Chemical mapping of a 177-nucleotide RNA with DMS and 2A3.
The data come from the RNA Mapping Database (RMDB), library TTRDEL.
For 2A3, 6,065 sequencing reads were counted.
For DMS, 3,159 sequencing reads were counted.

RNA sequence: GGGAACGACUCGAGUAGAGUCGAAAAGAUAUGGAUCAGACAGGGAGUCGGUCGGAAACGACACGACGAGGAUCUGUACUGAUCCUAAGUCACACGACCUGUUGUCUGUUCGCAGACAACAGGUCAACGGGAUACAUAUGUUCGCAUAUGUAUCCCGAAAAGAAACAACAACAACAAC
Reactivity to DMS in 0.01 (KOAc 150mM, MgCl2 10mM, bicine 150mM(pH8.5), 24C), signal-to-noise 3, nucleotides 027 to 126: g010a040u000a300u010g000g000a000u000c000a030g000a040c020a040g000g000g000a050g030u000c000g020g020u000c000g010g000a090a090a200c010g000a000c010a110c010g000a000c000g010a070g000g000a010u010c000u000g000u010a120c020u000g010a010u000c000c000u000a020a060g000u000c040a160c190a140c230g010a010c000c000u010g000u000u000g000u000c000u000g010u000u010c200g010c010a010g000a010c000a000a000c000a000g000g000u000c000a000a020
Reactivity to 2A3 in 0.01 (KOAc 150mM, MgCl2 10mM, bicine 150mM(pH8.5), 24C), signal-to-noise 4, nucleotides 027 to 126: g030a000u110a020u110g010g000a000u010c000a010g010a030c000a010g030g000g000a020g030u020c010g000g010u010c010g020g080a060a060a030c050g050a030c300a190c300g000a020c020g010a070g000g000a000u000c000u010g010u070a300c000u000g000a000u010c000c000u010a030a020g010u010c010a050c030a050c300g000a000c000c010u020g010u020u000g010u020c000u020g060u070u100c300g020c160a000g010a020c010a010a000c020a000g030g000u000c010a010a000